The record gives the reactivity of an RNA of 177 nucleotides to 2A3 and DMS.
[RMDB]
RNA sequence: GGGAACGACUCGAGUAGAGUCGAAAAGCUCUGCGAGACAGAUCGAACAACAAAGAGAGAUCGAAAAUCUUAGAGGAGAGAACGAAUCUGUGGACUUCACUAGGACAUUGUCGAUCAGAGGUCCAAAGAGCUAGGAUGGGUUCGCCUAUCUUAGCUCAAAAGAAACAACAACAACAAC
Reactivity to 2A3 in 0.01 (KOAc 150mM, MgCl2 10mM, bicine 150mM(pH8.5), 24C), signal-to-noise 9, nucleotides 027 to 126: g030c000u000c000u010g010c020g020a040g010a020c020a020g020a030u020c020g060a070a070c050a060a030c030a030a300a010g130a010g010a000g000a020u010c010g040a040a060a010a060u010c010u010u020a020g010a040g050g010a010g010a010g030a050a020c040g040a100a170u140c110u180g050u080g040g090a040c000u000u010c010a010c030u020a010g010g010a010c030a140u100u170g030u030c010g000a010u020c000a010g010a010g020g030u000c000c000a020a060a030
Reactivity to DMS in 0.01 (KOAc 150mM, MgCl2 10mM, bicine 150mM(pH8.5), 24C), signal-to-noise 9, nucleotides 027 to 126: g010c010u000c010u000g000c070g000a290g010a040c050a110g000a020u000c010g010a300a220c050a070a110c280a090a140a110g000a070g010a290g000a020u000c010g000a070a080a120a210u010c010u000u010a020g000a070g000g000a020g000a070g010a160a040c040g010a100a090u040c130u040g010u010g010g000a150c010u000u000c000a090c030u000a030g000g000a030c090a110u020u010g010u000c010g000a190u010c020a030g000a030g000g010u010c010c010a050a080a090

DMS adducts were read by reverse transcription with MarathonRT. It was measured as part of the RMDB library OK1LIB. 2A3 adducts were read by reverse transcription with SuperScript II with manganese.